[RMDB]
Annotation:
The data come from the RNA Mapping Database (RMDB), library RFM100. This 177-nucleotide RNA was probed chemically with 2A3 and DMS. Reactivities are given for positions 27 through 126. Conditions: 150 mM KOAc, 10 mM MgCl2 and 150 mM bicine (pH 8.5), 24 C.
RNA sequence: GGGAACGACUCGAGUAGAGUCGAAAAGGUUCCGCCGUUAUCGGGCCUUUGCAAUAGUUGCCAACGACAACUUUGCUCCGGUGGCUGUCGCCGCGUAAGCGGUGCCAAAAACCGACCUAAAGUCCUACAACAGCAUACCCUUCGGGGUAUGCUGUUGAAAAGAAACAACAACAACAAC
Reactivity to 2A3 in 0.01 (KOAc 150mM, MgCl2 10mM, bicine 150mM(pH8.5), 24C), signal-to-noise 2, nucleotides 027 to 126: g110g050u200u300c010c000g000c020c000g130u050u080a180u180c030g010g010g040c010c010u040u020u080g000c000a020a070u100a240g000u010u030g030c020c150a140a020c110g120a040c020a000a000c000u000u000u000g000c010u010c040c000g000g010u000g000g010c020u030g020u060c000g000c010c010g000c000g040u030a180a000g000c000g000g020u000g000c030c020a030a000a000a000a000c010c010g040a050c010c010u090a120a100a010g050u020c010c000u020a030
Reactivity to DMS in 0.01 (KOAc 150mM, MgCl2 10mM, bicine 150mM(pH8.5), 24C), signal-to-noise 1, nucleotides 027 to 126: g040g000u030u000c000c000g000c150c140g000u040u060a090u140c000g000g000g000c030c000u000u000u000g000c000a000a050u070a000g000u000u000g020c030c220a180a050c300g060a270c010a000a030c000u000u000u020g000c000u040c180c010g030g040u000g000g030c260u120g000u000c000g000c000c000g000c040g020u000a030a180g080c000g000g030u000g000c000c000a000a110a260a130a000c020c000g000a300c070c050u050a120a120a140g010u050c010c000u000a300